[RMDB]
RNA sequence: GGGAACGACUCGAGUAGAGUCGAAAAGUCAUUAUGUUCGCAUAAUGACAAAUAUAUGGGACUAUAUAAAACCUGAUAGCCGACCAAGAUCAUGUAUCGGCAAAAACAGACGAUUCGUCGUCUGUAAUGUUGGUAAUUAGUUCGCUAAUUACCAACAAAAAGAAACAACAACAACAAC
Reactivity to DMS in 0.01 (KOAc 150mM, MgCl2 10mM, bicine 150mM(pH8.5), 24C), signal-to-noise 4, nucleotides 027 to 126: g000u000c000a010u000u000a000u000g010u000u010c220g020c000a000u000a000a000u000g000a020c000a040a090a040u000a050u000a050u020g010g020g010a170c130u000a060u000a040u000a080a100a100a130c020c010u000g000a110u010a150g000c010c010g010a030c300c040a070a130g000a070u020c200a080u000g010u000a110u000c020g010g000c020a050a040a040a100a020c010a010g000a000c000g010a040u010u010c190g000u000c000g000u000c000u000g020u000a020a030
Reactivity to 2A3 in 0.01 (KOAc 150mM, MgCl2 10mM, bicine 150mM(pH8.5), 24C), signal-to-noise 4, nucleotides 027 to 126: g000u000c000a000u000u010a010u020g020u020u090c220g000c110a010u010a010a000u010g000a000c000a000a080a010u080a000u010a060u060g060g000g100a040c060u010a010u010a010u030a190a130a020a030c000c000u030g080a160u150a110g010c010c000g010a010c040c010a100a030g060a240u170c060a070u130g070u100a060u040c000g000g030c040a030a000a080a000a000c000a000g010a000c010g010a010u030u070c190g040u000c000g000u010c120u000g010u000a050a040